[RMDB]
RNA sequence: GGGAACGACUCGAGUAGAGUCGAAAACGGGCCGAUCCCGACGACCGUGCAGCCGGACAACGCCGUACCCGAGUACGCGUUCGGGAUCAUGACGGCUGUCACGUUCUGGCGGGAGUUGGACGGCGACACACAGACCGUCUAUCGGCACCUCGAACGCGACUCAUAAUCGGUUCGCCGAUUAUGAGUCAAAAGAAACAACAACAACAAC
Reactivity to 2A3 in 0.01 (KOAc 150mM, MgCl2 10mM, bicine 150mM(pH8.5), 24C), signal-to-noise 2, nucleotides 027 to 156: c070g000g020g020c040c040g010a030u030c000c000c000g030a040c050g000a010c010c000g050u000g010c000a010g030c000c000g030g000a030c000a080a120c100g160c190c000g030u060a030c090c140c000g040a100g080u090a080c090g020c050g140u000u060c110g000g030g000a000u160c060a000u110g060a030c000g000g030c000u000g060u300c010a000c020g000u000u000c000u120g000g120c070g000g090g020a000g040u130u080g080g000a020c010g010g000c000g030a010c100a000c000a010c010a270g100a160c000c000g000u020c000u000a000u000c000g000g010c060a300c000c000u070c000g120a180a010c050g090c130
An RNA of 207 nucleotides, treated with 2A3 and read out base by base. Source: RMDB library OK3TST, as collected in RNAgym.